[RMDB]
RNA sequence: GGGAACGACUCGAGUAGAGUCGAAAAAUUUGACAUCGACGCAAAGAAGUGCGUGAAGAAAGGGGAUGCCGGACCAAUGUGCCUGGUCGGCGAACUAGUUGACCCGCCAUUCCACGAAUUUGCGUACGCGUAAGAUACCGUUCGCGGUAUCUUACGCAAAAGAAACAACAACAACAAC
Reactivity to 2A3 in 0.01 (KOAc 150mM, MgCl2 10mM, bicine 150mM(pH8.5), 24C), signal-to-noise 2, nucleotides 027 to 126: a000u150u110u110g040a000c020a050u120c100g050a010c010g010c030a000a040a010g070a150a000g050u030g060c080g080u030g060a040a010g040a090a060a010g080g010g000g010a040u180g000c010c040g050g040a070c040c000a060a010u100g080u150g170c060c030u000g000g000u030c000g030g000c000g000a040a010c020u020a120g200u060u060g060a010c000c000c010g070c040c010a050u090u000c000c000a020c030g050a130a080u030u020u030g030c010g010u040a030c030
Reactivity to DMS in 0.01 (KOAc 150mM, MgCl2 10mM, bicine 150mM(pH8.5), 24C), signal-to-noise 2, nucleotides 027 to 126: a110u000u000u000g010a080c120a150u020c130g000a070c030g060c010a020a000a040g020a100a230g000u010g010c230g040u010g000a060a060g010a080a090a130g030g000g000g000a150u000g000c100c040g010g030a050c020c000a050a110u000g020u020g040c070c100u000g000g010u000c030g000g000c000g000a020a090c140u000a170g000u010u000g010a170c010c020c000g000c200c030a060u000u000c010c030a010c000g010a190a230u000u000u000g020c030g020u000a080c130
Chemical mapping of a 177-nucleotide RNA with 2A3 and DMS. For DMS the reverse transcriptase was MarathonRT. For 2A3, 1,580 sequencing reads were counted.